[RMDB]
RNA sequence: GGGAACGACUCGAGUAGAGUCGAAAAAAAGCUCACGCCGAUAAACGCCAUUGCUUUGGUGCGGUUUUGUUCGCGCGUGAGAUCGGAAAGCAGCGCCAUAACGGCAGCGGCAAUCGCACCGGAGCCACCUAGGGUAUCCUUUCGAGGAUACCCUAGGAAAAGAAACAACAACAACAAC
Reactivity to DMS in 0.01 (KOAc 150mM, MgCl2 10mM, bicine 150mM(pH8.5), 24C), signal-to-noise 2, nucleotides 027 to 126: a060a060a080g010c020u000c020a000c010g040c000c030g020a060u000a060a050a130c180g010c080c110a090u010u010g000c040u010u000u020g030g040u020g010c010g000g000u000u000u010u000g000u000u000c010g030c240g000c000g010u000g000a060g000a010u010c020g030g010a050a110a150g000c000a100g020c050g000c020c020a170u030a160a110c250g010g000c010a040g030c060g020g000c000a100a050u000c000g010c040a040c020c020g000g000a030g000c010c300a070
Reactivity to 2A3 in 0.01 (KOAc 150mM, MgCl2 10mM, bicine 150mM(pH8.5), 24C), signal-to-noise 1, nucleotides 027 to 126: a000a000a000g000c010u020c010a000c000g000c000c000g020a020u010a050a160a070c030g090c080c010a130u150u240g020c000u050u020u040g000g040u000g000c020g000g000u040u000u140u080g110u030u060c030g020c030g000c000g070u000g010a010g020a010u040c020g040g050a160a160a000g020c010a010g020c000g050c010c000a030u070a160a070c110g020g040c060a020g030c020g000g040c020a020a040u040c040g050c000a030c010c000g000g030a000g020c010c000a030

An RNA of 177 nucleotides, treated with DMS and 2A3 and read out base by base. For DMS, 1,072 sequencing reads were counted. The data come from the RNA Mapping Database (RMDB), library OK2TST. The 2A3 profile rests on 1,069 reads. The RNA was probed in 150 mM KOAc, 10 mM MgCl2 and 150 mM bicine (pH 8.5) at 24 C.